[RMDB]
RNA sequence: GGGAACGACUCGAGUAGAGUCGAAAAGUUUGACUGUUCGCAGUCAAACAAAGGCUAAGGUAUAAAAAUCUGCAAGUUACCUAAGCCAAAAACGAGCAGAAAAAACGGCGUACUUCGGUACGCCGAACCCUUCGUUUAAGUUCGCUUAAACGAAGGGAAAAGAAACAACAACAACAAC
Reactivity to DMS in 0.01 (KOAc 150mM, MgCl2 10mM, bicine 150mM(pH8.5), 24C), signal-to-noise 1, nucleotides 027 to 126: g000u000u000u000g020a000c000u000g010u020u030c210g000c000a010g020u010c010a000a020a000c000a030a050a140g000g000c020u010a070a000g010g020u000a010u040a010a050a120a200a080u000c010u000g000c000a200a110g030u000u000a040c000c000u000a110a080g020c000c000a020a020a020a010a100c170g040a200g030c000a000g000a010a160a090a010a050a160c000g010g000c000g020u030a000c000u000u010c130g010g000u000a000c050g010c000c000g000a020a020
Reactivity to 2A3 in 0.01 (KOAc 150mM, MgCl2 10mM, bicine 150mM(pH8.5), 24C), signal-to-noise 2, nucleotides 027 to 126: g010u000u000u000g000a000c000u030g030u040u080c210g000c080a000g020u020c000a010a010a010c010a000a050a000g020g000c010u030a000a030g040g030u090a140u070a180a300a090a080a140u040c010u050g000c020a030a110g030u040u000a010c000c000u000a020a020g030c020c030a140a000a020a010a000c090g000a020g000c000a010g110a020a100a000a000a000a020c010g010g000c000g010u010a000c020u060u040c190g050g000u010a000c000g040c010c000g010a010a000